An RNA of 177 nucleotides, treated with DMS and 2A3 and read out base by base.
Values cover nucleotides 27 to 126.
The DMS profile rests on 73,826 reads.
RNA sequence: GGGAACGACUCGAGUAGAGUCGAAAAUCAAUAGUAGCAUAUUAAUAAUCGUCGUAUGCUACUAGGAGUAUGUGACGAUUGUUACUCCACAUACUCAUUAGUCAGUGGAGUAAGUGAACUGACUGAAGAUAGUAAUGGGAUUCGUCUCGUUACUAUCAAAAGAAACAACAACAACAAC
Reactivity to DMS in 0.01 (KOAc 150mM, MgCl2 10mM, bicine 150mM(pH8.5), 24C), signal-to-noise 9, nucleotides 027 to 126: u040c070a090a080u000a000g010u000a000g000c000a000u000a010u010u020a090a110u020a070a060u020c130g010u010c250g010u000a000u000g000c000u000a000c000u000a020g000g010a040g010u010a010u010g010u000g010a130c080g000a040u010u010g010u030u030a080c100u010c050c000a010c000a020u010a010c010u000c070a140u020u010a040g010u000c030a020g000u000g000g010a140g010u010a070a060g000u010g000a100a030c040u000g000a030c010u010g010a110a130
Reactivity to 2A3 in 0.01 (KOAc 150mM, MgCl2 10mM, bicine 150mM(pH8.5), 24C), signal-to-noise 9, nucleotides 027 to 126: u080c030a010a060u010a020g000u000a000g000c000a000u020a000u090u140a120a100u100a110a080u170c090g100u010c040g010u070a000u000g000c000u000a000c000u000a010g010g010a020g020u050a030u050g050u030g000a040c000g000a060u040u140g100u150u130a070c040u000c020c000a000c000a000u020a000c000u010c020a050u040u070a010g010u000c020a000g010u020g050g050a100g070u120a120a030g030u050g070a030a010c020u020g020a010c010u020g020a070a010